[RMDB]
RNA sequence: GGGAACGACUCGAGUAGAGUCGAAAACCCACAGUUCGCUGUGGGAAAAAAGGGGUCCACGAAGAACUUGUCAGCUCCACCUGAAGCCUCCACGGGUGAAGAGCUUGGAUUUAGGGAGUGGACGGAGGCACCCAAAAAAGCACAGUUCGCUGUGCAACACAUCAGCACACUUCGGUGUGCUGAUGUGAAAAGAAACAACAACAACAAC
Reactivity to 2A3 in 0.01 (KOAc 150mM, MgCl2 10mM, bicine 150mM(pH8.5), 24C), signal-to-noise 1, nucleotides 027 to 156: c010c010c000a000c000a010g020u060u050c070g020c110u050g000u080g000g030g000a000a000a000a000a000a170g000g030g010g060u060c010c000a020c090g040a080a100g060a210a120c100u300u250g300u300c000a020g000c010u000c000c000a000c010c000u020g030a150a000g000c000c000u000c000c000a000c020g000g000g010u020g010a280a060g010a010g020c030u030u100g020g020a070u280u110u000a060g000g000g050a060g020u010g000g000a000c000g000g000a000g000g000c000a000c000c000c000a010a020a000a040a040a000g040c000a000c000a020g020u110u140c130g050c100u010g000u000g010c000a040a040
The record gives the reactivity of an RNA of 207 nucleotides to 2A3. For 2A3 the reverse transcriptase was SuperScript II with manganese. Reactivities are rounded to 0.1 and cut off at 0 and 3. The reactions ran in a buffer of 150 mM KOAc, 10 mM MgCl2 and 150 mM bicine (pH 8.5), at 24 C.